[RMDB]
RNA sequence: GGGAACGACUCGAGUAGAGUCGAAAAGAAAAGACGAUGUUAUUAUGAUUCUCGAGUAAUAGCAGGUCAAGCGUACUACUCGCCGAACGGAAGGCUGACUGUUCGCGCAAUGAAACGAGAAAGAAAAGCGUAUUUACCAGUUCGCUGGUAAAUACGCAAAAGAAACAACAACAACAAC
Reactivity to 2A3 in 0.01 (KOAc 150mM, MgCl2 10mM, bicine 150mM(pH8.5), 24C), signal-to-noise 4, nucleotides 027 to 126: g060a010a070a010a000g030a000c040g050a170u000g010u010u060a040u040u020a040u100g090a140u140u000c020u010c030g000a000g010u040a030a030u000a000g000c020a000g010g010u060c110a130a020g080c030g050u040a040c000u000a020c000u030c070g000c000c000g010a070a060c040g020g070a060a050g120g050c030u070g030a040c000u020g000u000u040c000g000c000g010c050a040a130u170g090a060a010a040c060g010a030g110a030a120a030g140a010a080a040a000
Reactivity to DMS in 0.01 (KOAc 150mM, MgCl2 10mM, bicine 150mM(pH8.5), 24C), signal-to-noise 2, nucleotides 027 to 126: g000a080a080a110a210g010a000c000g030a110u000g010u030u000a030u000u000a000u000g030a030u000u010c000u000c000g030a300g000u030a000a010u000a080g000c030a000g010g000u000c040a020a060g020c060g010u010a040c050u030a080c020u000c030g000c180c000g050a050a020c050g000g000a010a170g030g050c070u020g010a030c120u000g010u000u000c000g040c100g000c100a150a050u050g000a120a050a170c020g000a060g010a060a120a170g010a110a020a060a070
The data come from the RNA Mapping Database (RMDB), library OK1LIB. The record gives the reactivity of an RNA of 177 nucleotides to 2A3 and DMS. 2A3 adducts were read by reverse transcription with SuperScript II with manganese.